[RMDB]
RNA sequence: GGGAACGACUCGAGUAGAGUCGAAAAGAUAUGGAGGCAUUGCAUCAACAGCCUGUCCGUCGGAAACGACGGCAGGACAUGAUGCGUGCCUCCUAAGUCAAAACGGUCGUUGUUCGCAACGACCGAACUAUAUCCUACAGUUCGCUGUAGGAUAUAGAAAAGAAACAACAACAACAAC
Reactivity to 2A3 in 0.01 (KOAc 150mM, MgCl2 10mM, bicine 150mM(pH8.5), 24C), signal-to-noise 9, nucleotides 027 to 126: g020a000u020a010u070g010g010a010g010g000c030a000u120u300g080c010a000u120c110a230a300c070a150g010c000c010u050g060u290c020c010g000u000c000g020g000a000a020a000c000g000a000c000g000g000c010a000g010g010a000c030a210u300g000a000u000g000c000g000u000g000c000c000u000c000c000u000a000a000g000u000c000a010a010a060a090c010g000g000u010c010g000u010u020g040u090u130c300g000c190a000a000c000g000a000c000c000g000a000a000
Reactivity to DMS in 0.01 (KOAc 150mM, MgCl2 10mM, bicine 150mM(pH8.5), 24C), signal-to-noise 8, nucleotides 027 to 126: g000a020u000a070u010g000g000a010g000g010c000a010u000u020g070c000a000u000c010a150a070c270a180g010c000c000u000g000u020c010c010g020u000c000g020g000a020a010a050c000g010a010c000g010g000c000a000g010g010a000c050a150u020g010a010u000g010c010g010u000g010c000c000u000c000c000u000a000a040g000u000c000a090a090a140a280c020g010g010u000c000g020u000u000g000u000u010c260g020c000a010a010c000g000a010c000c000g010a010a050
Chemical mapping of a 177-nucleotide RNA with 2A3 and DMS. The data come from the RNA Mapping Database (RMDB), library TTRDES. The DMS profile rests on 24,718 reads.